[RMDB]
RNA sequence: GGGAACGACUCGAGUAGAGUCGAAAAGAUAUGGACGUAUCCGAAUAUGCACUCGGAAACGAGUGGCAUAAAUGUGGAGUACGUCCUAAGUCAAAGGGAAGGAACGUCUUCGGACGUUCCUUCCCAACACUUAAGAAGGGUUCGCCCUUCUUAAGUGAAAAGAAACAACAACAACAAC
Reactivity to DMS in 0.01 (KOAc 150mM, MgCl2 10mM, bicine 150mM(pH8.5), 24C), signal-to-noise 4, nucleotides 027 to 126: g010a020u000a140u010g000g010a010c000g010u000a020u000c000c000g020a160a140u000a010u000g000c000a040c000u000c000g010g000a040a040a080c000g000a010g010u000g010g020c000a000u000a010a130a110u010g030u000g000g000a050g000u000a000c000g010u000c000c000u000a010a060g000u000c020a090a100a120g010g010g010a020a010g010g000a010a010c000g010u000c000u000u000c220g020g010a010c000g010u000u000c000c000u000u000c000c000c000a010a020